[RMDB]
RNA sequence: GGGAACGACUCGAGUAGAGUCGAAAAGACUGUUUACCAAAAACACAGACCGCUGCUAGUCCGUAAGGAUGUGUAUAGCGGCCGAAACCUGCCCAGUGUUGGUACCUGAAAGCUCUUUUCAAGGAGACUUCACCUCCAAGUUCGCUUGGAGGUGAAGAAAAGAAACAACAACAACAAC
Reactivity to 2A3 in 0.01 (KOAc 150mM, MgCl2 10mM, bicine 150mM(pH8.5), 24C), signal-to-noise 2, nucleotides 027 to 126: g020a040c060u050g130u080u080u120a150c060c030a080a110a000a000a000c070a000c000a020g100a060c000c000g000c000u030g010c020u020a010g030u020c020c020g010u060a040a040g000g000a000u050g080u020g020u040a010u100a190g000c000g000g020c060c010g010a070a000a000c000c040u000g090c000c040c000a020g000u010g020u110u070g030g030u020a080c000c010u020g100a040a040a040g010c000u010c010u100u060u050u060c050a100a220g080g000a030g030a000
Reactivity to DMS in 0.01 (KOAc 150mM, MgCl2 10mM, bicine 150mM(pH8.5), 24C), signal-to-noise 1, nucleotides 027 to 126: g000a140c060u000g040u000u000u010a100c190c290a000a170a000a020a130c100a020c070a080g000a170c000c050g000c010u060g020c000u000a210g070u010c000c000g020u120a080a040g000g000a000u000g010u050g000u030a110u000a000g030c070g020g000c000c000g010a010a130a030c170c020u000g000c000c000c120a180g020u060g000u020u000g000g010u040a120c030c020u010g000a070a160a250g000c010u050c030u050u000u050u010c130a100a020g000g000a010g040a100
Structure probing data (2A3 and DMS) for a 177-nucleotide construct. DMS adducts were read by reverse transcription with MarathonRT. Conditions: 150 mM KOAc, 10 mM MgCl2 and 150 mM bicine (pH 8.5), 24 C.